[RMDB]
The record gives the reactivity of an RNA of 177 nucleotides to DMS and 2A3. The data come from the RNA Mapping Database (RMDB), library OK2TRN.

RNA sequence: GGGAACGACUCGAGUAGAGUCGAAAAACGUGGAAUCGUUGCACUACUAUGUCAAUAAUGCGAGGAUUUACGACGACACUUCGCGAGCUAUCGGUAGGAUGCACGAUAUAGCUGAGAAAUUCGCUACGCGUAUGCCAAUCUUCGGAUUGGCAUACGCAAAAGAAACAACAACAACAAC
Reactivity to DMS in 0.01 (KOAc 150mM, MgCl2 10mM, bicine 150mM(pH8.5), 24C), signal-to-noise 2, nucleotides 027 to 126: a110c120g020u010g000g000a080a070u000c010g020u000u010g040c060a130c020u000a020c040u000a070u010g020u000c050a060a080u010a040a110u000g000c010g020a040g000g040a140u000u010u010a100c190g000a110c210g010a040c140a190c060u000u000c000g030c040g000a120g030c110u030a010u010c050g010g010u000a030g000g000a100u010g000c000a050c000g000a030u000a180u000a040g010c000u010g000a050g000a100a050a200u010u010c150g000c040u000a000c260
Reactivity to 2A3 in 0.01 (KOAc 150mM, MgCl2 10mM, bicine 150mM(pH8.5), 24C), signal-to-noise 2, nucleotides 027 to 126: a030c070g080u160g110g100a100a040u010c000g110u040u130g050c040a030c030u030a030c000u040a060u090g030u090c040a140a120u170a160a030u300g000c030g010a000g010g000a050u010u110u220a170c150g110a070c070g020a000c080a010c080u020u040c000g000c040g010a020g000c020u080a020u190c100g000g010u000a010g080g090a120u010g000c030a000c000g000a000u000a010u010a030g060c090u080g000a010g010a130a210a050u170u070c030g000c040u090a060c090